Structure probing data (2A3 and DMS) for a 177-nucleotide construct.
It was measured as part of the RMDB library OK2TST.
The 2A3 profile rests on 15,369 reads.
The DMS profile rests on 32,609 reads.
[RMDB]
RNA sequence: GGGAACGACUCGAGUAGAGUCGAAAAAUGAGCGGCCCUUGAAGUUGAAGCGGUUCACGUAGUUCUCGCCGACGAGCACGGCGAGCGUGUCGGCGAUGUCCUUCAUCGUCACGCCGAGCGUGUUCGAGCAUUUAAUAAAUUUCGAUUUAUUAAAUGCAAAAGAAACAACAACAACAAC
Reactivity to 2A3 in 0.01 (KOAc 150mM, MgCl2 10mM, bicine 150mM(pH8.5), 24C), signal-to-noise 6, nucleotides 027 to 126: a000u110g010a030g020c040g020g020c030c020c000u010u080g130a150a040g060u140u100g060a050a010g020c030g050g030u050u060c040a010c080g050u080a040g050u040u030c030u020c030g030c030c030g050a080c010g010a010g010c030a010c010g090g000c000g070a030g000c000g000u040g030u050c050g030g000c010g000a020u020g080u070c040c060u100u090c020a020u010c000g030u020c000a000c010g010c000c010g010a070g110c010g000u010g030u010u010c010g000a030
Reactivity to DMS in 0.01 (KOAc 150mM, MgCl2 10mM, bicine 150mM(pH8.5), 24C), signal-to-noise 9, nucleotides 027 to 126: a080u000g000a080g020c040g010g020c020c030c030u000u000g010a090a140g010u010u010g010a110a110g020c050g010g010u000u000c050a050c070g020u000a110g010u000u000c020u000c020g020c090c080g010a160c020g000a030g010c030a030c010g000g010c000g000a080g010c030g010u000g010u010c070g020g010c050g010a020u000g000u010c200c160u010u000c020a030u000c010g010u000c010a020c010g000c000c020g000a080g010c020g020u000g010u000u000c010g010a200